[RMDB]
RNA sequence: GGGAACGACUCGAGUAGAGUCGAAAAGAGAUCGAUCGGCUCAAGGAGCGGUUGGCCCAGCAUGACAGCGCGGCCUCCGCCAAGGCCGCCGCCCGCUCCCUGCAGAAGCAGGUCAGCGAUGCGGCCAAAGGUUGUAUGAGUUCGCUCAUACAACCUUAAAAGAAACAACAACAACAAC
Reactivity to 2A3 in 0.01 (KOAc 150mM, MgCl2 10mM, bicine 150mM(pH8.5), 24C), signal-to-noise 1, nucleotides 027 to 126: g060a000g000a090u070c060g020a030u040c030g050g000c020u020c120a060a160g200g020a140g050c020g000g010u120u060g030g000c000c000c000a000g000c010a010u170g090a110c040a060g000c020g000c020g000g000c000c000u000c000c010g000c000c000a000a010g000g010c000c000g000c010c000g030c010c000c010g000c020u000c010c000c000u020g000c020a110g020a300a030g040c020a010g000g030u050c010a000g010c000g040a020u080g000c000g010g030c000c000a000
Reactivity to DMS in 0.01 (KOAc 150mM, MgCl2 10mM, bicine 150mM(pH8.5), 24C), signal-to-noise 4, nucleotides 027 to 126: g000a070g000a100u000c050g000a100u000c050g020g000c040u000c040a140a110g030g000a150g020c010g020g020u010u000g020g030c020c000c090a300g010c020a030u000g010a150c230a100g010c020g040c300g000g000c010c010u000c030c010g000c030c050a100a100g000g000c020c000g000c010c030g000c040c060c010g010c010u000c170c010c000u000g010c010a170g020a120a130g010c010a020g010g000u000c060a010g020c000g010a030u000g000c010g020g020c020c030a040